[RMDB]
RNA sequence: GGGAACGACUCGAGUAGAGUCGAAAAACGCCAUGGCCUGCGAGCCGGCAUGCGCAGCGGCUUCGGCGGUGUAGGUCAACCAAGCCAGAUAGGGCUGGGCUGCGGCGACCAUCGCCAUCGAGGCCGGGUGUUGGGUAAUGUUCGCAUUACCCAACACAAAAGAAACAACAACAACAAC
Reactivity to DMS in 0.01 (KOAc 150mM, MgCl2 10mM, bicine 150mM(pH8.5), 24C), signal-to-noise 2, nucleotides 027 to 126: a110c040g020c030c040a180u000g000g000c040c050u000g010c120g020a110g030c040c040g000g020c090a060u000g010c100g000c070a140g010c030g010g000c000u010u000c020g010g000c110g000g030u010g000u000a180g000g010u000c000a060a210c000c000a100a050g020c020c000a080g010a300u010a100g020g040g040c010u010g010g000g050c010u000g000c150g010g000c300g010a040c030c010a140u000c010g010c010c000a030u010c030g000a020g010g000c010c010g000g000
Reactivity to 2A3 in 0.01 (KOAc 150mM, MgCl2 10mM, bicine 150mM(pH8.5), 24C), signal-to-noise 1, nucleotides 027 to 126: a030c030g000c010c020a090u110g090g020c010c020u100g010c100g120a050g070c020c000g000g000c020a020u170g050c070g000c020a100g030c010g000g070c000u020u010c010g010g000c060g010g010u020g030u050a140g000g020u010c030a030a040c020c010a080a000g020c000c000a030g040a170u230a150g120g100g060c040u040g010g030g070c000u070g020c090g090g000c000g000a020c010c000a070u050c010g000c000c000a010u050c000g000a000g000g000c000c000g000g000